Annotation:
The record gives the reactivity of an RNA of 207 nucleotides to DMS and 2A3. For DMS, 8,825 sequencing reads were counted. It was measured as part of the RMDB library OK3TST.
RNA sequence: GGGAACGACUCGAGUAGAGUCGAAAAUAGAAUAGUAGACCUUCUGAACCACGUACUGUAUGAUGGUGAUUUUAUGCUUCAUUUGUCUGCCUUUAUAGCUAUGGAUUUGUUUCGUUUGUUAAUGACGUGGAUGUCCAGAAGAUAGUAGGAGUAAGUAUACUAGCGUACCAUUCGUGGUACGCUAGUAAAAAGAAACAACAACAACAAC
Reactivity to DMS in 0.01 (KOAc 150mM, MgCl2 10mM, bicine 150mM(pH8.5), 24C), signal-to-noise 3, nucleotides 027 to 156: u000a090g000a070a120u000a070g010u010a070g010a100c060c030u000u000c040u000g030a070a080c030c010a040c050g030u000a120c060u000g020u010a070u010g010a090u000g010g010u000g010a040u000u010u000u010a100u000g000c060u000u000c040a100u010u000u010g020u010c020u000g020c000c040u010u000u000a080u000a090g000c050u000a120u000g010g010a090u000u000u010g010u010u000u010c030g010u000u000u000g000u000u000a060a100u000g000a050c030g050u000g000g020a100u010g030u000c040c020a070g010a060a080g010a080u000a060g020u000a050g000g000a090g010u000a040a090g010u000a200
Reactivity to 2A3 in 0.01 (KOAc 150mM, MgCl2 10mM, bicine 150mM(pH8.5), 24C), signal-to-noise 3, nucleotides 027 to 156: u140a000g110a060a050u040a030g060u020a030g040a060c000c000u050u020c040u040g020a060a040c000c000a000c040g020u070a100c030u120g040u120a070u100g090a040u080g000g040u040g040a100u010u050u030u130a100u100g030c000u050u040c040a110u030u030u100g050u060c040u020g020c000c020u090u160u030a110u060a070g000c030u010a090u120g030g020a070u000u000u090g040u020u060u020c020g020u000u030u090g070u050u090a120a090u160g010a020c030g000u010g010g030a040u060g060u010c040c010a020g000a040a010g030a070u100a030g020u020a020g040g030a010g020u060a060a010g020u020a030